[RMDB]
RNA sequence: GGGAACGACUCGAGUAGAGUCGAAAAUAUGAAACACCAAAGUGGGACCUUUUGUGGUGAAAACUCUAUUUGUGAAUGUCAGGAAUUCGGCAAAGGAGUCGAGCUGAUGAAAGCCCAUAUCGACCACACCCGUAUCAACUUUCGAGUUGAUACGGGUAAAAGAAACAACAACAACAAC
Reactivity to 2A3 in 0.01 (KOAc 150mM, MgCl2 10mM, bicine 150mM(pH8.5), 24C), signal-to-noise 1, nucleotides 027 to 126: u210a060u110g090a020a100a040c070a050c050c030a110a000a000g050u080g000g070g010a090c000c000u000u030u060u030g000u000g040g000u020g080a030a000a000a000c030u080c040u210a300u190u000u010g050u000g000a040a000u050g060u130c140a080g170g100a150a060u060u010c010g040g000c090a000a030a060g000g000a010g000u000c020g020a020g080c000u080g000a110u020g000a010a000a020g000c000c000c000a010u020a040u070c020g050a060c020c000a050c010
Reactivity to DMS in 0.01 (KOAc 150mM, MgCl2 10mM, bicine 150mM(pH8.5), 24C), signal-to-noise 1, nucleotides 027 to 126: u040a060u010g010a170a100a120c100a130c030c040a020a070a150g000u000g000g000g040a170c110c000u000u000u000u040g020u000g020g030u020g000a030a110a030a060c010u000c010u000a120u000u000u060g030u000g010a030a000u000g010u010c290a150g000g010a090a020u000u000c000g010g070c000a010a050a000g010g050a060g000u000c020g010a300g000c020u000g020a090u000g000a040a050a030g020c010c000c000a040u000a050u020c090g000a120c110c060a080c160
The record gives the reactivity of an RNA of 177 nucleotides to 2A3 and DMS. Source: RMDB library OK2TST, as collected in RNAgym. Conditions: 150 mM KOAc, 10 mM MgCl2 and 150 mM bicine (pH 8.5), 24 C.